[RMDB]
RNA sequence: GGGAACGACUCGAGUAGAGUCGAAAAAGUCGUUCAAGAACGACGAGGGCGAGACUGUGACGUACAAUCCCAAAGAAGUGCGUUUCGGGAGUGGUGACUAAUGGCGUACAGCAAUAACGCGCGUGGAAUAAUGCACGGGGUUCGCCCCGUGCAUUAUAAAAGAAACAACAACAACAAC
Reactivity to DMS in 0.01 (KOAc 150mM, MgCl2 10mM, bicine 150mM(pH8.5), 24C), signal-to-noise 1, nucleotides 027 to 126: a070g000u000c000g000u000u000c160a110a130g090a090a030c020g000a060c040g030a080g000g000g000c060g010a100g010a120c070u000g020u000g000a020c030g000u000a080c100a090a140u000c040c030c020a050a170a130g020a070a050g040u000g000c100g000u000u000u010c090g030g000g000a070g000u000g000g010u010g020a050c140u000a100a120u000g020g020c000g020u000a050c090a030g000c080a010a090u000a040a040c110g000c020g020c060g010u010g000g010a090
Description:
The data come from the RNA Mapping Database (RMDB), library OK2TRN. This 177-nucleotide RNA was probed chemically with DMS. The RNA was probed in 150 mM KOAc, 10 mM MgCl2 and 150 mM bicine (pH 8.5) at 24 C.